[RMDB]
RNA sequence: GGGAACGACUCGAGUAGAGUCGAAAAGAUAUGGAUAUCCGACGAUCGGGAGGAGGAGCAUCGGAAACGAUGCCCUCCGAGGAUCGGGAGGAUAUCCUAAGUCAAAAGCCUUGGUUCGCCAAGGCAACCAUCAAUCACAGUUCGCUGUGAUUGAUGGAAAAGAAACAACAACAACAAC
Reactivity to DMS in 0.01 (KOAc 150mM, MgCl2 10mM, bicine 150mM(pH8.5), 24C), signal-to-noise 5, nucleotides 027 to 126: g000a030u010a300u000g000g000a020u000a010u010c010c000g020a300c030g000a010u000c000g010g000g030a300g010g010a040g000g010a120g000c000a000u000c000g010g000a090a140a150c000g010a000u010g000c010c010c000u000c000c000g010a300g000g000a000u000c000g010g000g010a300g000g000a000u000a010u000c000c000u010a000a060g000u000c020a060a060a130a070g000c000c000u000u000g020g010u000u010c260g010c000c010a010a010g000g020c020a020a040
Reactivity to 2A3 in 0.01 (KOAc 150mM, MgCl2 10mM, bicine 150mM(pH8.5), 24C), signal-to-noise 2, nucleotides 027 to 126: g030a030u080a020u160g000g000a010u010a000u000c000c020g020a070c010g010a070u020c040g110g140g180a150g000g020a010g000g030a180g030c000a000u010c010g040g030a080a060a040c020g000a000u000g000c000c000c000u000c010c010g010a000g000g000a010u020c020g010g020g040a120g000g000a000u000a000u010c000c000u000a020a010g030u000c030a010a060a090a070g000c010c000u020u010g030g030u060u090c290g020c130c000a000a000g000g000c000a000a010
Structure probing data (DMS and 2A3) for a 177-nucleotide construct. DMS adducts were read by reverse transcription with MarathonRT. Values cover nucleotides 27 to 126. The data come from the RNA Mapping Database (RMDB), library TTRDEL. The DMS profile rests on 4,130 reads.